Structure probing data (2A3 and DMS) for a 177-nucleotide construct. Reactivities are given for positions 27 through 126. For 2A3 the reverse transcriptase was SuperScript II with manganese. The DMS profile rests on 1,509 reads. Values are in units of 0.01, from 0 to 300, in steps of 10. The 2A3 profile rests on 1,128 reads. The reactions ran in a buffer of 150 mM KOAc, 10 mM MgCl2 and 150 mM bicine (pH 8.5), at 24 C. DMS adducts were read by reverse transcription with MarathonRT. Source: RMDB library OK1LIB, as collected in RNAgym.
RNA sequence: GGGAACGACUCGAGUAGAGUCGAAAAGCACAGGCACUAUUGCGGUACCCGACCGGCACACCGCCGGUUGGGCGAUGCGCGAGUUGGUCGUGCUACACGAAGUGGCGCAUCAUUUGUGCCAGGUGCCGUCGCUAAUUCCUUUCGAGGAAUUAGCGACAAAAGAAACAACAACAACAAC
Reactivity to 2A3 in 0.01 (KOAc 150mM, MgCl2 10mM, bicine 150mM(pH8.5), 24C), signal-to-noise 2, nucleotides 027 to 126: g000c030a000c060a060g000g010c030a010c010u110a100u140u220g070c010g060g080u110a060c030c000c000g000a000c000c010g010g040c020a050c000a040c100c140g000c000c000g000g000u000u000g000g010g000c010g000a000u100g020c040g000c010g020a080g030u050u140g230g030u060c110g000u010g030c140u160a020c060a000c030g110a210a010g030u090g110g000c010g000c010a010u010c000a030u070u060u180g000u050g000c010c010a100g010g010u030g010c000c000
Reactivity to DMS in 0.01 (KOAc 150mM, MgCl2 10mM, bicine 150mM(pH8.5), 24C), signal-to-noise 1, nucleotides 027 to 126: g030c040a000c020a050g030g020c020a000c000u000a130u000u030g000c000g010g080u080a190c040c020c030g010a000c000c000g000g000c000a150c030a090c300c140g010c000c000g050g020u000u000g000g020g030c100g030a040u000g000c000g020c050g000a120g000u050u000g000g020u080c060g010u000g000c120u020a090c010a070c140g040a080a160g000u000g000g000c030g040c010a000u000c050a050u020u020u000g000u010g200c000c000a030g020g020u000g000c040c060